[RMDB]
RNA sequence: GGGAACGACUCGAGUAGAGUCGAAAACUUCUUGGCUGGGAGGCGAGUGAUUUGGUUGCGUUAGGGACGUUGCUGACUUGGAUACUUGCUCUACAGGAAAGCAAAUGCUAUUGGUCGUUCCAGCAAGACUGUGCGCGAGUUCCUUGAGCGGAAUCACCUCUUACCUAAGGUUCGCCUUAGGUAAGAGAAAAGAAACAACAACAACAAC
Reactivity to DMS in 0.01 (KOAc 150mM, MgCl2 10mM, bicine 150mM(pH8.5), 24C), signal-to-noise 2, nucleotides 027 to 156: c050u010u010c020u000u010g030g060c050u020g010g050g020a080g020g020c080g010a120g020u000g010a120u010u000u010g030g000u010u010g030c040g020u000u000a150g020g010g010a090c070g010u000u000g010c000u030g010a190c060u000u000g030g020a160u000a030c040u000u020g030c030u000c030u000a140c120a100g010g010a060a090a120g020c040a060a100a110u000g010c020u010a110u000u000g020g010u000c000g010u000u010c020c010a100g000c030a060a090g000a130c060u000g040u020g010c140g010c060g000a110g010u000u000c020c020u000u010g010a130g000c060g000g030a080a190u000c010a070c070
Reactivity to 2A3 in 0.01 (KOAc 150mM, MgCl2 10mM, bicine 150mM(pH8.5), 24C), signal-to-noise 5, nucleotides 027 to 156: c010u050u060c020u070u060g040g000c030u020g030g000g020a040g020g030c030g010a030g040u070g060a130u060u060u100g080g010u040u060g000c030g030u040u080a090g000g030g020a020c060g010u020u080g010c010u020g020a080c020u040u050g010g010a020u040a180c020u010u060g010c000u020c020u060a040c050a030g060g070a100a080a010g040c020a070a110a140u220g030c020u100a070u200u150g030g000u010c000g000u000u020c000c000a010g000c010a000a030g030a040c030u060g010u040g060c040g000c010g020a020g030u040u040c020c000u040u070g050a050g040c040g010g050a040a030u080c010a050c070